An RNA of 207 nucleotides, treated with 2A3 and read out base by base. For 2A3, 493 sequencing reads were counted. 2A3 adducts were read by reverse transcription with SuperScript II with manganese.
[RMDB]
RNA sequence: GGGAACGACUCGAGUAGAGUCGAAAAAACACAAUUCACCUCCUCACACACUAGACAGGAAACCAACGCAGCUUGAAGCCAGUGACAAGAAAAAUCAAGCUGGAAAUAUGCCUCGGGGAUCAGUCAAGAGAUUUGGAGAGGUGGAAAGAAGCUGUCACAUGCGAUUACGAUUCGUCGUAAUCGCAUGAAAAGAAACAACAACAACAAC
Reactivity to 2A3 in 0.01 (KOAc 150mM, MgCl2 10mM, bicine 150mM(pH8.5), 24C), signal-to-noise 1, nucleotides 027 to 156: a000a010c130a000c050a020a020u060u010c020a000c020c010u000c010c010u050c010a090c000a000c010a020c100u020a020g020a020c000a020g090g060a170a030a030c040c030a090a040c030g090c090a000g020c010u000u070g000a090a040g090c010c010a020g050u010g100a090c020a130a060g170a080a100a060a000a020u090c060a000a040g010c000u000g000g000a100a090a000u200a010u100g040c000c000u020c070g060g000g010g040a020u060c070a030g020u040c010a020a050g060a000g030a260u040u060u180g020g020a070g000a000g000g000u010g020g050a020a050a020g100a030a000g050c080u080g020u080c020a040